[RMDB]
RNA sequence: GGGAACGACUCGAGUAGAGUCGAAAAGCUCGCCGCGUAAUCGCGGGCCUGUGUUUGCGCUGCUCUGAGCGAACAUAUCGGCCCGACGCCAAACGGAGCUUGCUCUUACGUUGUGCACGGCGGACGUAGGGGGACUUUUGUCUGUGCUAAGACUCUGGUCUUCAAUAAAGUUCGCUUUAUUGAAGACAAAAGAAACAACAACAACAAC
Reactivity to 2A3 in 0.01 (KOAc 150mM, MgCl2 10mM, bicine 150mM(pH8.5), 24C), signal-to-noise 8, nucleotides 027 to 156: g000c000u020c040g140c080c040g030c020g050u080a080a070u110c070g000c010g020g010g000c000c010u010g000u010g020u010u030u060g040c030g010c040u220g030c040u090c120u270g070a030g010c000g000a000a000c000a000u070a070u160c080g010g000c000c010c000g050a090c000g000c020c030a060a030a030c030g030g000a010g000c000u020u190g000c000u010c000u010u030a020c020g010u010u010g030u080g030c020a010c020g010g000c030g020g000a010c020g000u040a070g010g000g000g010g010a020c010u120u120u110u100g090u080c030u030g010u010g000c010u020a060a030g060a070c030u010c050u100g010
Reactivity to DMS in 0.01 (KOAc 150mM, MgCl2 10mM, bicine 150mM(pH8.5), 24C), signal-to-noise 3, nucleotides 027 to 156: g020c020u000c020g030c020c040g020c040g010u000a120a110u000c030g040c040g010g030g020c020c010u010g040u000g010u000u000u010g000c000g010c020u000g040c190u010c170u000g000a080g000c010g010a020a030c010a040u000a020u000c090g040g010c010c000c000g010a040c030g010c030c040a060a110a100c080g010g010a050g030c020u000u010g010c020u000c030u000u010a060c040g020u000u000g010u000g020c000a080c060g020g010c020g020g030a020c030g020u000a090g020g020g010g040g010a120c060u000u000u000u000g010u000c010u010g020u000g010c030u010a150a130g000a110c020u010c020u010g020